Overview
An RNA of 177 nucleotides, treated with 2A3 and DMS and read out base by base. For 2A3, 41,961 sequencing reads were counted.

RNA sequence: GGGAACGACUCGAGUAGAGUCGAAAAUCAUGCUAUCACCUGCUAACUGUGUCUCGUACAGUUAGUGCUGAGCGAGAGUUCAGGAGGUGUCUUUGUACGAGACGAAGACGCUAAGGUGAUAGCAUGCCUAGUCGUAUCAAUUCGUUGAUACGACUAGAAAAGAAACAACAACAACAAC
Reactivity to 2A3 in 0.01 (KOAc 150mM, MgCl2 10mM, bicine 150mM(pH8.5), 24C), signal-to-noise 8, nucleotides 027 to 126: u090c000a000u000g000c000u000a000u000c000a000c000c000u010g010c010u020a050a070c010u030g020u020g050u130c010u020c100g060u050a000c000a010g010u020u020a010g000u020g010c000u010g000a000g000c010g010a060g010a010g060u030u020c010a010g030g070a080g060g110u080g050u040c010u020u040u020g020u020a070c090g070a040g000a060c010g010a020a000g020a000c040g000c030u040a050a020g000g000u000g000a000u000a000g000c000a000u000g000c000
Reactivity to DMS in 0.01 (KOAc 150mM, MgCl2 10mM, bicine 150mM(pH8.5), 24C), signal-to-noise 9, nucleotides 027 to 126: u020c010a000u000g000c000u000a010u000c000a000c000c010u000g000c030u010a050a110c030u000g010u010g010u010c070u000c130g010u000a050c000a010g010u010u000a020g020u000g000c000u000g000a080g000c020g000a210g000a220g010u000u000c000a010g000g020a300g010g010u000g010u000c020u000u000u000g010u000a090c190g000a100g010a070c010g010a030a020g010a080c090g010c010u010a060a080g000g010u000g000a010u000a000g010c000a000u000g000c300
It was measured as part of the RMDB library OK2TRN.
Reactivities are given for positions 27 through 126.
The RNA was probed in 150 mM KOAc, 10 mM MgCl2 and 150 mM bicine (pH 8.5) at 24 C.